[RMDB]
Overview:
This 177-nucleotide RNA was probed chemically with 2A3 and DMS. In probing experiments dimethyl sulfate is read out at A N1 and C N3, which are open when not base-paired.

RNA sequence: GGGAACGACUCGAGUAGAGUCGAAAAAUUACCACCGCGAUGGCGUUCUCGAACGCCUCCUUGGUGAGGAUGUCGCGGGCGGUGAUGCCGCGGCGCAGCAGCUCGACGACGGCCUGACCGCUGCGACUGAUAUCACCGCUUUCGAGCGGUGAUAUCAAAAAGAAACAACAACAACAAC
Reactivity to 2A3 in 0.01 (KOAc 150mM, MgCl2 10mM, bicine 150mM(pH8.5), 24C), signal-to-noise 8, nucleotides 027 to 126: a000u120u120a090c010c010a010c010c010g020c080g060a060u190g010g000c010g010u010u010c090u070c190g150a030a000c000g010c010c000u010c020c010u080u260g040g000u050g030a100g060g050a070u130g000u000c000g000c000g050g030g000c000g000g000u030g010a020u030g000c000c000g000c000g020g000c020g000c020a110g060c020a030g020c100u070c080g040a040c010g030a050c010g020g000c000c030u030g110a010c000c000g000c000u010g000c000g000a000c020
Reactivity to DMS in 0.01 (KOAc 150mM, MgCl2 10mM, bicine 150mM(pH8.5), 24C), signal-to-noise 5, nucleotides 027 to 126: a120u040u010a120c030c000a030c030c010g000c300g010a030u030g010g010c000g000u000u010c050u040c300g010a040a010c020g020c000c010u010c010c030u000u030g010g010u010g010a090g000g000a090u030g010u000c000g000c000g000g020g000c020g000g000u000g000a030u000g000c010c000g010c020g000g010c000g010c110a130g030c140a090g030c100u010c030g010a030c020g020a150c020g000g000c000c060u000g000a040c020c010g010c000u010g010c000g000a010c020
For 2A3, 11,428 sequencing reads were counted. Reactivities are given for positions 27 through 126.